RNA sequence: GGGAACGACUCGAGUAGAGUCGAAAAGAUAUGGAAUGGGUAGACAUGCUGCAGAGGGUCGGAAACGACCCGAUCAGCAACAGCUACCACAUUCCUAAGUCAAAGCCUUUGACUUCGGUCAAAGGCACACGUAGUGUGGCUUCGGCCACACUACGUGAAAAGAAACAACAACAACAAC
Reactivity to DMS in 0.01 (KOAc 150mM, MgCl2 10mM, bicine 150mM(pH8.5), 24C), signal-to-noise 2, nucleotides 027 to 126: g000a040u010a300u000g010g000a000a000u000g030g000g020u020a030g000a060c050a300u030g000c000u000g030c180a030g010a300g000g000g000u000c000g000g000a080a090a210c000g030a030c000c000c000g000a100u000c010a010g000c000a080a010c300a130g000c020u000a000c000c000a020c000a010u010u000c000c010u000a040a070g000u000c080a150a100a080g020c000c060u030u010u000g000a000c000u010u000c250g010g010u000c000a000a010a030g000g000c000a020
Reactivity to 2A3 in 0.01 (KOAc 150mM, MgCl2 10mM, bicine 150mM(pH8.5), 24C), signal-to-noise 1, nucleotides 027 to 126: g000a000u080a050u220g010g000a000a000u000g010g030g000u010a010g060a080c090a120u180g020c000u010g030c090a050g070a080g110g000g000u000c030g030g000a030a120a020c000g000a000c000c000c050g000a030u030c000a020g060c000a010a030c040a010g020c010u010a010c000c010a040c000a020u000u000c010c010u030a090a000g050u010c050a120a140a000g020c020c000u000u000u000g040a020c000u000u070c300g120g000u000c050a000a010a090g010g150c000a000